[RMDB]
RNA sequence: GGGAACGACUCGAGUAGAGUCGAAAAUGAUAUUGCCGGAUGUCAGAAGCGUAAACUUUUCGGGUCUUAUAGCGGAGAUGAGUCACCCAAGCAGGGUUAGCAAGCUUUCUGGAAUGAUAACACCAAACACGAUUAAUAUGUUCGCAUAUUAAUCGUGAAAAGAAACAACAACAACAAC
Reactivity to 2A3 in 0.01 (KOAc 150mM, MgCl2 10mM, bicine 150mM(pH8.5), 24C), signal-to-noise 6, nucleotides 027 to 126: u090g010a020u040a030u100u090g090c030c000g070g020a040u070g050u080c040a020g020a130a010g070c020g060u080a050a050a090c020u050u030u080u080c030g020g010g030u020c020u040u130a120u100a090g070c070g030g030a060g020a050u100g010a010g030u020c030a030c020c000c010a000a010g030c050a020g020g050g000u020u020a020g030c040a080a020g020c010u020u150u020c030u040g020g050a050a030u070g040a040u060a090a030c050a030c050c030a020a070a000
Reactivity to DMS in 0.01 (KOAc 150mM, MgCl2 10mM, bicine 150mM(pH8.5), 24C), signal-to-noise 9, nucleotides 027 to 126: u000g010a130u000a060u010u010g030c030c030g020g020a100u000g010u010c060a090g010a110a080g020c070g010u010a060a070a100c070u000u000u000u000c070g010g000g010u000c030u000u000a060u000a080g010c050g000g010a090g010a090u000g000a060g000u000c060a120c020c010c020a070a110g020c110a070g000g010g010u000u000a060g010c060a040a100g000c050u000u010u000c050u000g020g010a070a070u000g000a060u000a050a050c080a090c070c140a050a080a180

Notes: Chemical mapping of a 177-nucleotide RNA with 2A3 and DMS. The RNA was probed in 150 mM KOAc, 10 mM MgCl2 and 150 mM bicine (pH 8.5) at 24 C. 2A3 adducts were read by reverse transcription with SuperScript II with manganese. Values cover nucleotides 27 to 126. Source: RMDB library OK2TST, as collected in RNAgym.